[RMDB]
RNA sequence: GGGAACGACUCGAGUAGAGUCGAAAAGAUUAGGUGUCCGUGAGGAAUCGAAACGAGGCACGAGAUUCCAAGGUCUCUGUAGUACGUCGUCUCGUGACGUCUCUCUAGUCACAUUCGACAUACCAAACGUAUGUACUAGGUUCGCCUAGUACAUACGAAAAGAAACAACAACAACAAC
Reactivity to DMS in 0.01 (KOAc 150mM, MgCl2 10mM, bicine 150mM(pH8.5), 24C), signal-to-noise 2, nucleotides 027 to 126: g000a020u020u020a160g000g010u000g000u000c000c000g000u020g000a220g010g040a210a070u020c100g000a050a090a140c030g000a120g010g010c000a020c010g020a160g000a030u000u000c040c030a170a090g000g000u000c030u000c040u020g000u010a120g010u020a010c110g000u000c030g000u000c020u000c090g030u000g000a020c020g000u030c080u040c060u030c010u010a060g020u010c000a000c050a060u000u000c000g000a000c000a230u000a040c000c170a150a300a300
Reactivity to 2A3 in 0.01 (KOAc 150mM, MgCl2 10mM, bicine 150mM(pH8.5), 24C), signal-to-noise 3, nucleotides 027 to 126: g040a030u080u140a070g000g030u010g020u010c020c030g020u050g040a070g050g140a110a110u130c050g030a040a080a040c080g010a180g030g000c010a000c100g020a030g010a050u090u020c060c010a020a070g090g000u000c010u000c010u040g040u040a030g030u020a010c030g010u010c000g010u000c000u020c060g020u010g010a000c030g080u010c030u000c000u010c030u120a050g010u000c000a000c000a060u020u030c000g000a010c000a060u140a100c030c000a180a020a060